[RMDB]
An RNA of 177 nucleotides, treated with 2A3 and DMS and read out base by base.
Values are in units of 0.01, from 0 to 300, in steps of 10.
Source: RMDB library OK1LIB, as collected in RNAgym.
The reactions ran in a buffer of 150 mM KOAc, 10 mM MgCl2 and 150 mM bicine (pH 8.5), at 24 C.
For DMS, 2,612 sequencing reads were counted.
RNA sequence: GGGAACGACUCGAGUAGAGUCGAAAAGGAGCCCCACCUCCCCGUGCGGGCACCCUGCACCUUCAGCUGACUGCGCCGCGCGUGGCCGGUGGCGCCGCCCGCGUACCGACGGGCCACCCGGCGAGCGGUUUCACUGCGAGUUCGCUCGCAGUGAAACAAAAGAAACAACAACAACAAC
Reactivity to 2A3 in 0.01 (KOAc 150mM, MgCl2 10mM, bicine 150mM(pH8.5), 24C), signal-to-noise 3, nucleotides 027 to 126: g010g000a020g020c000c000c000c000a030c010c070u120c030c020c010c010g020u030g030c130g000g000g030c020a040c020c000c020u020g030c030a100c020c000u100u160c080a070g000c030u080g140a190c030u140g070c020g030c030c000g070c010g040c040g060u020g010g010c020c020g090g020u040g030g010c010g060c010c020g100c020c030c000g000c010g010u090a180c020c000g120a060c060g050g000g000c000c000a030c020c020c000g000g000c000g000a020g000c000g050
Reactivity to DMS in 0.01 (KOAc 150mM, MgCl2 10mM, bicine 150mM(pH8.5), 24C), signal-to-noise 2, nucleotides 027 to 126: g000g010a210g040c070c010c010c010a070c020c090u010c070c000c020c060g050u020g000c160g020g000g000c060a050c030c020c050u000g000c090a120c040c040u010u000c050a100g000c110u000g000a130c040u020g000c000g000c000c000g020c080g000c160g020u010g000g020c000c040g010g030u000g000g010c050g000c000c100g000c060c050c060g000c070g010u010a080c060c040g000a030c040g050g000g000c000c010a030c000c030c000g010g050c030g000a020g000c020g000